The record gives the reactivity of an RNA of 177 nucleotides to DMS and 2A3. The RNA was probed in 150 mM KOAc, 10 mM MgCl2 and 150 mM bicine (pH 8.5) at 24 C. For 2A3 the reverse transcriptase was SuperScript II with manganese. The data come from the RNA Mapping Database (RMDB), library OK2TRN. The 2A3 profile rests on 1,215 reads. The DMS profile rests on 1,426 reads.
RNA sequence: GGGAACGACUCGAGUAGAGUCGAAAAAGCGUCACGGUCUCUACAAGGGCGCUCGAUAGUGGGGGAAACGUCGCGAUAGAUGCUAACGAUCUCGAGGCUGGCUUUAUGCUACUAAAAGCUUGUGUCGCGCUCUAGAUUCAUUCGUGAAUCUAGAGCGAAAAGAAACAACAACAACAAC
Reactivity to DMS in 0.01 (KOAc 150mM, MgCl2 10mM, bicine 150mM(pH8.5), 24C), signal-to-noise 2, nucleotides 027 to 126: a050g010c030g000u000c020a080c150g040g010u000c040u010c070u000a090c080a100a150g010g010g000c010g020c020u000c020g010a050u000a060g050u000g000g000g000g040g000a090a070a090c110g010u000c070g000c070g000a150u000a060g000a050u020g000c010u000a100a100c100g010a080u000c040u010c060g010a070g010g000c030u000g010g030c020u000u000u000a050u010g020c060u000a030c080u000a030a030a040a040g000c020u000u000g020u000g000u000c080g000
Reactivity to 2A3 in 0.01 (KOAc 150mM, MgCl2 10mM, bicine 150mM(pH8.5), 24C), signal-to-noise 1, nucleotides 027 to 126: a000g050c040g030u030c020a030c090g060g110u070c060u000c000u180a080c030a130a100g020g020g000c050g000c030u000c010g070a090u100a100g120u090g030g040g000g000g000a000a150a080c010g020u010c050g000c000g050a020u070a150g020a040u090g010c030u010a120a010c050g010a060u000c010u040c060g010a020g070g000c030u030g000g030c010u030u140u100a180u250g040c050u030a040c010u050a200a080a000a000g000c000u040u060g010u050g040u040c010g000